[RMDB]
RNA sequence: GGGAACGACUCGAGUAGAGUCGAAAAAAGCAAUCCCAACAGGUGCCGCAGAUUUGAAAGGCAGAUACAGUAUCUCGGUUGGGUCUGUUUCCAAAAGCGCGAUCUUGCACCUAAAGGGAAUUUGCUCCCCGCUGGACACGUUCGCGUGUCCAGCGGGAAAAGAAACAACAACAACAAC
Reactivity to 2A3 in 0.01 (KOAc 150mM, MgCl2 10mM, bicine 150mM(pH8.5), 24C), signal-to-noise 2, nucleotides 027 to 126: a000a000g000c000a010a000u000c000c000c000a040a000c080a000g050g000u000g010c010c040g150c150a030g000a050u060u070u140g040a300a050a110g130g000c000a000g010a000u090a000c000a010g160u240a290u010c150u060c070g290g060u250u220g150g020g020u040c000u010g000u000u050u000c000c000a020a050a100a050g030c080g000c010g040a000u040c000u050u130g010c000a000c000c000u000a090a000a000g040g030g030a030a060u060u020u030g020c010u000c030
The record gives the reactivity of an RNA of 177 nucleotides to 2A3. The 2A3 profile rests on 620 reads. The RNA was probed in 150 mM KOAc, 10 mM MgCl2 and 150 mM bicine (pH 8.5) at 24 C.